Structure probing data (DMS and 2A3) for a 177-nucleotide construct. DMS adducts were read by reverse transcription with MarathonRT. The 2A3 profile rests on 753 reads.
RNA sequence: GGGAACGACUCGAGUAGAGUCGAAAAUCUAACUGUACAACAUUGGUGUAUGUGGCAGCUAAGGUGGCAAAGAUAACCUCAGCACAGAAAGUCGGAGGAGAUCCAAUGGAAAUCUAUGCUUUAAAGAAUCCAACAACAGGUUCGCCUGUUGUUGGAUAAAAGAAACAACAACAACAAC
Reactivity to DMS in 0.01 (KOAc 150mM, MgCl2 10mM, bicine 150mM(pH8.5), 24C), signal-to-noise 2, nucleotides 027 to 126: u010c050u010a090a120c040u010g020u010a070c060a060a060c070a180u000u010g010g000u000g000u000a050u020g020u010g020g000c050a050g040c040u010a070a100g030g000u010g000g000c030a040a110a140g040a070u000a020a030c020c090u000c130a060g000c020a090c050a030g010a090a080a140g030u010c090g020g030a270g000g010a080g010a080u000c020c010a120a160u000g000g010a010a070a080u010c070u010a080u000g000c020u000u010u020a060a090a160g000a090
Reactivity to 2A3 in 0.01 (KOAc 150mM, MgCl2 10mM, bicine 150mM(pH8.5), 24C), signal-to-noise 1, nucleotides 027 to 126: u010c000u010a050a080c000u060g090u160a100c020a060a030c000a180u090u100g140g000u050g090u030a020u100g070u030g020g000c010a020g030c000u030a070a000g070g010u040g020g090c000a120a000a060g040a080u020a000a010c010c020u050c030a020g000c070a000c000a030g120a080a110a040g050u050c030g000g040a020g010g080a040g000a070u080c000c000a070a040u010g020g000a100a070a000u010c040u000a030u090g020c020u000u100u110a100a100a000g050a040